[RMDB]
RNA sequence: GGGAACGACUCGAGUAGAGUCGAAAACAGUCAACGUGAAGGCGGGCCAGACCAUCGCCGCAUUCUACCAGAGCACCGUCAUGAUCUUUGGCACGAUGGCUCGCUACAUCCCUAGAGUUAGGGAAAACGGAUAUUUUAUCUUCGGAUAAAAUAUCCGAAAAGAAACAACAACAACAAC
Reactivity to DMS in 0.01 (KOAc 150mM, MgCl2 10mM, bicine 150mM(pH8.5), 24C), signal-to-noise 4, nucleotides 027 to 126: c110a100g000u010c080a110a120c110g020u000g020a180a120g030g020c040g010g020g000c020c040a090g010a110c110c080a090u000c080g030c040c040g040c130a080u010u010c090u010a090c030c040a050g010a050g020c120a040c040c030g010u000c140a100u020g010a050u010c030u000u000u000g010g020c040a070c110g000a140u000g000g010c010u000c050g020c060u000a060c110a150u000c010c000c000u000a040g010a180g010u010u000a020g010g020g000a020a060a100a140
Reactivity to 2A3 in 0.01 (KOAc 150mM, MgCl2 10mM, bicine 150mM(pH8.5), 24C), signal-to-noise 4, nucleotides 027 to 126: c030a020g150u120c060a020a050c080g050u080g190a170a030g070g000c010g020g010g000c010c010a030g030a110c030c020a060u110c050g020c040c010g010c010a020u140u040c010u050a070c030c040a020g000a010g060c060a020c090c060g130u110c030a080u120g080a090u030c050u050u110u060g010g030c010a000c100g030a040u050g000g000c000u000c020g000c000u040a020c000a070u060c000c000c000u100a130g100a080g300u180u070a020g050g000g000a010a020a020a020
An RNA of 177 nucleotides, treated with DMS and 2A3 and read out base by base. Source: RMDB library OK2TRN, as collected in RNAgym. For 2A3, 4,221 sequencing reads were counted. As a SHAPE reagent, 2A3 marks flexible, mostly unpaired nucleotides at the ribose 2'-OH.